Description: This 177-nucleotide RNA was probed chemically with 2A3. The 2A3 profile rests on 550 reads. For 2A3 the reverse transcriptase was SuperScript II with manganese.

[RMDB]
RNA sequence: GGGAACGACUCGAGUAGAGUCGAAAAACGCAGCUACGUACGCGUAGCUGCGAUAGUGUGUAUGUGAGGGAGUAGGAUGUAUGGUUGUUAGAUAGACAACUACAAUCUUUUCUCACAACAGACAGAAUGAAGUUCUCGCGUUCGCGCGAGAACUUCAAAAAGAAACAACAACAACAAC
Reactivity to 2A3 in 0.01 (KOAc 150mM, MgCl2 10mM, bicine 150mM(pH8.5), 24C), signal-to-noise 1, nucleotides 027 to 126: a000c000g000c000a030g040c000u010a000c000g020u000a000c150g010c000g120u000a000g000c000u000g000c000g000a000u000a000g020u040g010u000g000u000a220u240g020u000g000a000g000g070g000a000g030u220a040g020g290a000u000g000u000a030u190g120g020u000u030g000u000u040a110g000a210u070a180g070a020c000a000a000c000u060a000c000a050a050u000c070u030u010u030u030c000u000c000a000c000a000a040c000a000g010a000c000a040g000a030a070
Description:
The data come from the RNA Mapping Database (RMDB), library RFM100. Reactivities are given for positions 27 through 126.